[RMDB]
The record gives the reactivity of an RNA of 207 nucleotides to 2A3 and DMS.
RNA sequence: GGGAACGACUCGAGUAGAGUCGAAAAACAUUGCUGGAAAAUCAGUAUGAGUGGACAGUCAUCCUAGUUGACUCUCAAAAUCAUUUCUCUUCCAGACAGAGACUUUGCUACUCCCAAGUGAAAACAAGGUUAAUGCAGAUAUUCCAAAUGCAUGAGACAUACUAAAUCGGUUCGCCGAUUUAGUAUGAAAAGAAACAACAACAACAAC
Reactivity to 2A3 in 0.01 (KOAc 150mM, MgCl2 10mM, bicine 150mM(pH8.5), 24C), signal-to-noise 6, nucleotides 027 to 156: a010c050a080u110u210g000c010u030g000g040a020a030a060a120u170c030a060g040u050a040u060g010a010g050u130g050g050a010c020a020g010u030c020a030u080c040c080u090a090g110u050u050g020a020c010u010c000u020c050a060a090a120a190u050c020a050u030u250u040c050u010c000u050u020c020c010a030g020a050c020a020g070a060g010a020c010u060u040u060g010c030u040a070c020u020c010c050c020a060a050g070u090g160a080a030a010a010c020a050a010g030g010u090u090a040a010u060g000c000a000g030a060u050a070u160u100c070c020a040a070a030u040g010c010a010u050g010a010g030a050
Reactivity to DMS in 0.01 (KOAc 150mM, MgCl2 10mM, bicine 150mM(pH8.5), 24C), signal-to-noise 3, nucleotides 027 to 156: a050c070a120u000u000g010c030u000g000g010a080a040a090a080u010c080a060g030u000a040u000g000a090g050u010g030g010a080c060a070g020u000c020a070u000c170c080u010a150g020u000u000g010a040c020u000c050u000c020a020a100a070a150u000c010a080u000u000u000c010u000c020u000u010c040c000a090g010a130c060a070g000a260g000a050c050u000u000u000g000c010u000a110c060u000c020c000c050a090a160g010u000g000a050a100a050a050c010a030a020g000g020u000u000a050a200u000g030c010a030g010a080u000a080u010u000c050c030a070a050a120u000g020c010a030u000g000a150g010a230
For DMS, 6,704 sequencing reads were counted.